[RMDB]
RNA sequence: GGGAACGACUCGAGUAGAGUCGAAAAAUCAGAGGGCGCUAUCAUGCAAACUAGGAUUGUCUGCUCAUGCACAGAACCAACUACCGAUAACUAACAGUGCAUGAAGAUUAGUUAUUCCAUAUUAAUUAAAACUCGUAAUUCUUCGGAAUUACGAGAACCGCUAUACAAUGUUCGCAUUGUAUAGCGGAAAAGAAACAACAACAACAAC
Reactivity to DMS in 0.01 (KOAc 150mM, MgCl2 10mM, bicine 150mM(pH8.5), 24C), signal-to-noise 2, nucleotides 027 to 156: a070u000c040a070g060a080g000g000g040c280g060c030u000a090u010c080a150u000g000c040a070a270a120c050u000a130g040g000a140u000u000g010u000c020u000g000c010u000c060a040u040g040c020a090c010a070g020a050a110c040c010a040a110c090u000a300c060c010g000a060u000a030a080c060u000a030a080c030a160g010u000g040c010a040u000g010a010a220g010a140u000u060a060g020u000u000a010u000u000c040c050a100u000a130u000u000a100a120u020u010a090a030a080a180c000u000c000g020u010a030a030u000u000c000u000u010c300g030g000a000a000u000u000a000c000g030a010g000a010a040
Reactivity to 2A3 in 0.01 (KOAc 150mM, MgCl2 10mM, bicine 150mM(pH8.5), 24C), signal-to-noise 4, nucleotides 027 to 156: a000u040c030a050g030a040g030g040g000c010g000c010u080a140u300c060a040u250g010c030a010a020a050c030u040a030g010g040a030u020u020g030u010c010u030g020c010u010c000a000u000g000c010a010c010a030g060a160a090c080c040a070a090c060u170a110c060c070g100a120u060a130a100c040u030a040a040c020a060g010u000g020c010a000u010g020a030a020g010a040u060u070a010g050u030u040a050u090u040c010c000a030u070a060u150u270a160a060u090u110a050a060a030a070c010u010c000g010u010a000a000u000u000c010u000u020c110g070g000a000a000u000u000a000c000g000a000g000a000a010

An RNA of 207 nucleotides, treated with DMS and 2A3 and read out base by base. DMS adducts were read by reverse transcription with MarathonRT. It was measured as part of the RMDB library M2RFOK. 2A3 adducts were read by reverse transcription with SuperScript II with manganese. The RNA was probed in 150 mM KOAc, 10 mM MgCl2 and 150 mM bicine (pH 8.5) at 24 C. For DMS, 1,987 sequencing reads were counted.